[RMDB]
RNA sequence: GGGAACGACUCGAGUAGAGUCGAAAAACAUGAUAACACUCGCUCAAGUACGCUUCUUGAGUUAAAUAAAUGUUACCUUGUUGAUCUGCGUAUGUUCCUCUCAGUAGUGCCACAUCAACGCUAGGGAAUUCCAGGUGUCGUUCGCGACACCUGGAAUAAAAGAAACAACAACAACAAC
Reactivity to 2A3 in 0.01 (KOAc 150mM, MgCl2 10mM, bicine 150mM(pH8.5), 24C), signal-to-noise 3, nucleotides 027 to 126: a000c060a080u120g030a050u120a160a030c060a010c000u080c100g000c000u000c000a000a010g120u130a060c050g050c140u070u020c040u030u070g000a030g050u050u120a170a300a000u220a050a080a000u060g010u000u000a060c010c000u000u000g000u020u050g010a060u000c010u030g000c000g050u070a080u300g040u050u010c020c000u020c020u030c090a170g030u050a000g090u130g110c090c000a100c000a050u060c030a130a000c070g110c070u200a100g000g050g060a040
Reactivity to DMS in 0.01 (KOAc 150mM, MgCl2 10mM, bicine 150mM(pH8.5), 24C), signal-to-noise 1, nucleotides 027 to 126: a000c040a020u000g000a090u010a050a000c090a070c100u030c230g000c020u000c000a000a020g060u000a120c230g000c150u020u000c000u000u000g000a000g000u000u040a020a150a030u050a060a030a100u000g020u000u020a120c000c000u020u000g000u020u000g000a160u000c020u070g030c150g020u000a050u040g020u030u000c090c000u020c050u060c000a110g000u040a020g020u000g040c060c080a050c120a060u000c070a000a020c040g020c070u000a050g000g000g030a020
Chemical mapping of a 177-nucleotide RNA with 2A3 and DMS. High 2A3 reactivity points to a flexible backbone, as in loops and unpaired stretches. For DMS the reverse transcriptase was MarathonRT. 2A3 adducts were read by reverse transcription with SuperScript II with manganese. Conditions: 150 mM KOAc, 10 mM MgCl2 and 150 mM bicine (pH 8.5), 24 C.